This 207-nucleotide RNA was probed chemically with 2A3. The 2A3 profile rests on 1,319 reads. It was measured as part of the RMDB library RNAMAK.

RNA sequence: GGGAACGACUCGAGUAGAGUCGAAAAAGUUACAUUCUUCGGAAUGUAACUAAAAAAACCUUUGUGUGAAGACAUGUCGCGGUUAUUCCCAUUGGGAAUCAACCCGACAACAGCUUCACACUCUGGUAAAAAACGCUGGGUGUUCGCACCCAGCGAAAGGUGUAUAGAAGUUCGCUUCUAUACACCUAAAAGAAACAACAACAACAAC
Reactivity to 2A3 in 0.01 (KOAc 150mM, MgCl2 10mM, bicine 150mM(pH8.5), 24C), signal-to-noise 2, nucleotides 027 to 156: a000g000u010u010a000c000a000u010u000c010u030u050c130g060g010a000a000u000g000u000a000a000c000u020a030a020a010a000a000a010a010c000c000u010u000u040g010u000g000u020g000a000a010g000a070c050a100u040g010u000c020g060c170g010g010u000u000a010u000u010c000c010c060a140u110u300g000g020g010a010a020u050c050a050a000c000c020c010g000a000c000a000a000c010a000g010c000u000u000c000a000c000a000c000u000c010u000g000g000u020a060a110a020a110a000a000c020g030c070u030g010g000g010u010g010u100u140c190g300c010a000c300c000c010a000g030c000g000a020a010